[RMDB]
RNA sequence: GGGAACGACUCGAGUAGAGUCGAAAACGGUGAUCUUAAGCUCGGUGGCCUGCUCGUUGAACAGGUCGAGGAUCUGCAACGCACGUUCAACAGACUGAAUAAUCGGCAUAAUGCUGGCAUGUCCACGGUCGUGUAUUAGUUUCGACUAAUACACGACAAAAGAAACAACAACAACAAC
Reactivity to DMS in 0.01 (KOAc 150mM, MgCl2 10mM, bicine 150mM(pH8.5), 24C), signal-to-noise 6, nucleotides 027 to 126: c090g010g020u000g010a050u000c040u000u000a090a120g010c050u010c050g020g010u010g000g000c020c020u000g010c020u000c070g010u000u010g000a050a060c040a080g020g010u010c010g000a130g010g010a060u000c050u010g010c050a050a060c080g010c080a070c130g000u000u010c020a070a080c090a080g010a070c060u000g000a080a100u010a100a100u010c050g020g000c030a100u010a080a070u010g010c020u000g000g020c060a050u000g000u010c010c060a100c220g010
Reactivity to 2A3 in 0.01 (KOAc 150mM, MgCl2 10mM, bicine 150mM(pH8.5), 24C), signal-to-noise 5, nucleotides 027 to 126: c030g020g040u070g030a080u030c020u100u110a070a010g020c030u010c040g080g010u060g030g000c030c000u020g020c000u030c040g130u040u080g000a070a020c020a020g010g060u030c020g030a050g020g020a030u020c030u070g030c010a050a080c050g020c030a040c070g020u050u050c010a050a050c010a050g110a080c030u060g030a030a030u150a120a060u130c010g020g000c040a050u100a150a070u260g010c030u010g000g030c010a050u060g010u010c010c020a050c090g050